[RMDB]
RNA sequence: GGGAACGACUCGAGUAGAGUCGAAAAUUGGUUCGCUCAGGGUUCUCCUUCAGCGCCCGUUGACCGUUUUCGCUUGCCACAUCCAUUUCUAUGAUAUGCUCCUUCUGGAUCAUGAUGUUGCCAUGCAAACACUUUAGCUUGCCUUCAUAAUCAUUACCUCAUGAAUGGAAUUCGUUCCAUUCAUGAGAAAAGAAACAACAACAACAAC
Reactivity to 2A3 in 0.01 (KOAc 150mM, MgCl2 10mM, bicine 150mM(pH8.5), 24C), signal-to-noise 5, nucleotides 027 to 156: u090u120g040g020u090u110c050g030c060u050c070a040g000g030g000u090u020c060u060c030c000u030u080c030a030g030c010g010c020c010c020g030u030u110g040a060c010c030g040u010u000u040u040c030g010c020u020u100g020c000c020a060c010a070u020c060c020a050u040u030u070c050u060a090u120g110a050u080a030u130g030c020u020c010c000u070u060c040u060g060g030a060u040c020a040u080g040a020u060g040u060u040g040c060c010a050u090g010c020a010a100a000c050a030c070u070u080u070a030g010c010u020u050g010c000c000u040u060c030a060u090a160a050u080c060a040u140u280a100c040
Reactivity to DMS in 0.01 (KOAc 150mM, MgCl2 10mM, bicine 150mM(pH8.5), 24C), signal-to-noise 2, nucleotides 027 to 156: u000u000g040g000u010u010c050g000c050u030c020a120g030g040g010u000u020c020u000c020c100u000u010c050a100g010c030g020c090c020c030g050u000u000g000a110c020c030g020u010u000u000u000c000g020c080u010u000g010c030c030a080c070a090u000c030c020a080u000u000u000c040u000a100u000g020a120u000a080u000g010c040u010c000c000u010u000c060u010g000g000a070u010c080a090u000g000a080u000g020u000u010g000c000c070a160u000g010c030a070a040a060c050a110c090u000u000u010a110g010c020u000u000g040c040c020u010u020c010a070u010a070a140u000c040a160u000u010a170c140

The record gives the reactivity of an RNA of 207 nucleotides to 2A3 and DMS. 2A3 adducts were read by reverse transcription with SuperScript II with manganese. For DMS, 4,620 sequencing reads were counted. The RNA was probed in 150 mM KOAc, 10 mM MgCl2 and 150 mM bicine (pH 8.5) at 24 C. It was measured as part of the RMDB library OK3TST.